An RNA of 177 nucleotides, treated with DMS and read out base by base.
[RMDB]
RNA sequence: GGGAACGACUCGAGUAGAGUCGAAAAGAUAUGGAGUAGUGAGCAGUAUUUAUGCUUCGAUAAGUCCCACUCGGAAACGAGUGAAGGACUUUUGACGAAGGUAAAUACUGCUCACUACUCCUAAGUCGUGUCGUAAUAUGUUCGCAUAUUACGACACAAAAGAAACAACAACAACAAC
Reactivity to DMS in 0.01 (KOAc 150mM, MgCl2 10mM, bicine 150mM(pH8.5), 24C), signal-to-noise 2, nucleotides 027 to 126: g010a100u000a300u010g010g010a020g000u000a000g020u000g000a010g000c000a030g010u010a010u000u000u000a010u010g010c000u010u000c020g040a180u000a010a020g020u010c000c000c000a000c000u000c000g010g000a180a080a300c020g010a010g000u010g000a120a100g010g000a010c000u000u000u010u000g010a190c110g000a000a000g000g010u000a000a010a010u000a000c000u000g010c000u000c000a010c010u000a000c010u020c000c000u000a000a050g000u000c130
Overview
For DMS, 2,304 sequencing reads were counted. It was measured as part of the RMDB library TTRINS. The RNA was probed in 150 mM KOAc, 10 mM MgCl2 and 150 mM bicine (pH 8.5) at 24 C.